Structure probing data (2A3) for a 207-nucleotide construct.
The reactions ran in a buffer of 150 mM KOAc, 10 mM MgCl2 and 150 mM bicine (pH 8.5), at 24 C.
Values cover nucleotides 27 to 156.
2A3 adducts were read by reverse transcription with SuperScript II with manganese.
[RMDB]
RNA sequence: GGGAACGACUCGAGUAGAGUCGAAAACUGCAGGUCAACGGUACUUCUUCAGAUCAGCUAUUGCAGAAGAGAGGUGAGCCAAGCGCUCUGGGCCAGUGCGACUGUAUAUAGGAGCUUUUCAUUUCAACCAGAAGCUAACUCUCUCCGAAACAAUGAGGGAUUAUGGGAGGUUCGCCUCCCAUAAUCCAAAAGAAACAACAACAACAAC
Reactivity to 2A3 in 0.01 (KOAc 150mM, MgCl2 10mM, bicine 150mM(pH8.5), 24C), signal-to-noise 1, nucleotides 027 to 156: c010u060g000c000a000g020g030u050c020a050a040c100g060g070u050a020c010u010u020c010u000u070c040a010g020a150u000c010a000g060c020u040a040u140u090g000c020a010g010a110a000g020a040g000a000g020g070u110g040a020g020c020c040a160a020g020c020g000c050u010c000u000g010g000g000c030c020a040g040u040g060c030g010a030c010u010g060u160a130u020a020u050a090g010g020a010g040c000u080u050u220u140c110a130u050u140u250c050a100a060c010c010a020g020a070a000g030c000u000a030a100c000u000c000u000c000u000c000c010g120a030a060a000c020a060a080u110g010a120g010
The 2A3 profile rests on 602 reads. The data come from the RNA Mapping Database (RMDB), library OK3TST.